RNA sequence: GGGAACGACUCGAGUAGAGUCGAAAACAGUUACAGGAUAUGGAGACACUUAUCUCAUUUUUAAAAUUAAAUAAGGAUCAGCCUCAAACGUUAACAAUACUUUGUGGUCAUGGUAAGAAAUUUGCAGUACUCGAGUUAUCUUCGGAUAACUCGAGUAAAAAGAAACAACAACAACAAC
Reactivity to 2A3 in 0.01 (KOAc 150mM, MgCl2 10mM, bicine 150mM(pH8.5), 24C), signal-to-noise 2, nucleotides 027 to 126: c080a020g050u230u060a090c060a020g030g010a020u050a040u110g140g040a030g000a000c080a000c110u070u000a040u080c000u000c040a000u080u080u080u160u170a130a060a000a000u170u100a110a040a040u140a030a040g010g000a000u030c050a000g000c000c000u000c000a100a050a000c050g020u100u080a140a000c000a220a000u070a150c010u060u030u080g050u030g000g020u070c060a040u010g000g000u070a070a110g120a160a100a140u150u080u180g000c000a020g130
Reactivity to DMS in 0.01 (KOAc 150mM, MgCl2 10mM, bicine 150mM(pH8.5), 24C), signal-to-noise 1, nucleotides 027 to 126: c170a080g030u040u040a190c060a040g000g020a050u000a000u090g000g030a120g030a150c090a050c000u000u070a040u000c000u050c070a140u000u000u000u010u100a040a000a070a100u030u030a130a080a020u010a060a090g020g010a020u000c040a080g000c010c010u000c020a040a120a010c240g040u030u020a080a070c200a040a070u020a050c070u000u000u000g030u000g000g000u000c010a040u000g010g020u000a040a080g000a060a030a070u000u000u070g010c160a020g000